[RMDB]
RNA sequence: GGGAACGACUCGAGUAGAGUCGAAAAUUAAACCGGUACUAUCUAUGCGACUUGAAGCCUCCACGAGUCAAAACCGAAAGGGCAUAGAUAGUACCGCAUGAAGCAGGCACGUGCAAAAGAAAAAAAACAGUAUACUAAUCUUCGGAUUAGUAUACUGAAAAGAAACAACAACAACAAC
Reactivity to DMS in 0.01 (KOAc 150mM, MgCl2 10mM, bicine 150mM(pH8.5), 24C), signal-to-noise 2, nucleotides 027 to 126: u000u020a080a120a160c170c000g040g010u000a000c010u000a010u010c010u000a020u000g000c000g000a010c010u000u010g040a130a090g010c000c000u010c050c070a300c060g000a000g000u000c010a120a040a120a110c000c030g020a090a070a060g010g000g000c000a000u010a020g010a030u000a030g010u000a000c010c000g000c040a010u020g000a080a040g040c070a020g040g050c010a090c030g020u010g010c060a120a070a110a080g020a000a000a000a070a090a030a070a220
Reactivity to 2A3 in 0.01 (KOAc 150mM, MgCl2 10mM, bicine 150mM(pH8.5), 24C), signal-to-noise 1, nucleotides 027 to 126: u080u020a120a000a000c000c000g000g000u010a000c000u000a000u000c000u000a000u000g000c000g020a010c020u000u020g070a220a030g020c020c020u040c020c020a030c050g010a030g000u000c020a090a180a300a120c000c000g020a060a000a000g010g000g010c000a010u010a000g000a000u000a010g000u000a000c000c000g000c000a020u030g030a040a010g030c060a020g020g000c010a000c030g020u010g020c000a010a010a030a120g080a100a160a040a000a000a010a000a000
Conditions: 150 mM KOAc, 10 mM MgCl2 and 150 mM bicine (pH 8.5), 24 C.
An RNA of 177 nucleotides, treated with DMS and 2A3 and read out base by base.
It was measured as part of the RMDB library M2PK90.
For 2A3, 2,256 sequencing reads were counted.